[RMDB]
Structure probing data (2A3 and DMS) for a 177-nucleotide construct. For 2A3 the reverse transcriptase was SuperScript II with manganese. DMS (dimethyl sulfate) methylates the pairing face of unpaired adenines and cytosines.

RNA sequence: GGGAACGACUCGAGUAGAGUCGAAAACGGUGGGCAUCCGGAUUGUCCGUCGCGUCGACCCGGGCUGUGCAGUAGACGACGCGGUCCACGGUCGCACCCUGCCACCCGCACAGCGAUUCGGCGAGCAUGGACUCCUAGUAUUCGUACUAGGAGUCCAAAAAGAAACAACAACAACAAC
Reactivity to 2A3 in 0.01 (KOAc 150mM, MgCl2 10mM, bicine 150mM(pH8.5), 24C), signal-to-noise 2, nucleotides 027 to 126: c030g000g000u060g000g090g040c070a100u110c090c010g130g100a070u080u090g040u000c010c010g040u020c020g000c010g010u030c000g030a170c020c020c000g030g040g000c120u080g050u170g010c000a060g030u150a040g040a120c060g010a020c010g000c010g300g050u080c100c050a070c060g000g010u000c000g000c020a080c050c000c030u000g030c020c000a030c030c010c000g000c030a130c010a030g080c010g030a090u060u010c000g010g000c000g000a020g010c060a060
Reactivity to DMS in 0.01 (KOAc 150mM, MgCl2 10mM, bicine 150mM(pH8.5), 24C), signal-to-noise 3, nucleotides 027 to 126: c040g020g020u000g020g000g020c060a080u000c060c030g000g020a120u010u000g000u000c010c000g010u000c020g020c050g010u000c020g020a080c050c190c020g000g000g000c220u000g010u000g020c050a060g000u000a130g010a220c040g000a050c020g010c030g020g000u020c110c090a130c070g000g000u000c000g010c080a170c040c160c020u000g020c010c030a090c040c000c030g010c070a050c240a090g000c030g010a090u000u000c020g000g020c050g000a070g010c060a090